Conditions: 150 mM KOAc, 10 mM MgCl2 and 150 mM bicine (pH 8.5), 24 C. This 177-nucleotide RNA was probed chemically with DMS and 2A3. Source: RMDB library OK2TRN, as collected in RNAgym. Reactivities are given for positions 27 through 126.
[RMDB]
RNA sequence: GGGAACGACUCGAGUAGAGUCGAAAACGUCGAUCAUGCGCAUUUCGACAAAGAACUGUCCGUUGAUCUCGCCGUAGUCAUGGAUCGGCACGAUGUGUGGCUCGGUCAGCCGUCCCGCGGUGUCGGCCACCGGUCUGGAAUUCGUUCCAGACCGGUGAAAAGAAACAACAACAACAAC
Reactivity to DMS in 0.01 (KOAc 150mM, MgCl2 10mM, bicine 150mM(pH8.5), 24C), signal-to-noise 3, nucleotides 027 to 126: c110g040u010c040g010a030u000c070a080u000g010c200g020c040a100u010u000u000c020g010a110c150a060a130a150g010a040a070c070u000g000u010c080c030g010u010u010g030a050u000c020u000c130g000c010c030g020u010a020g020u010c030a030u010g000g010a020u000c030g010g020c140a080c080g010a030u010g010u000g010u000g010g000c030u000c040g020g010u010c100a130g000c020c030g000u000c010c010c030g010c090g000g010u000g000u010c020g000g000c090
Reactivity to 2A3 in 0.01 (KOAc 150mM, MgCl2 10mM, bicine 150mM(pH8.5), 24C), signal-to-noise 4, nucleotides 027 to 126: c030g070u040c050g020a040u030c030a070u190g030c050g000c100a090u030u080u040c060g030a050c080a050a140a020g060a040a020c040u040g050u090c040c070g060u040u070g030a050u020c010u020c090g000c040c020g120u180a010g020u000c000a040u020g070g040a050u060c010g090g110c160a050c080g040a080u090g080u030g010u040g300g000c020u040c030g000g040u030c040a000g040c010c000g000u040c020c020c010g030c020g010g010u040g020u020c000g000g020c010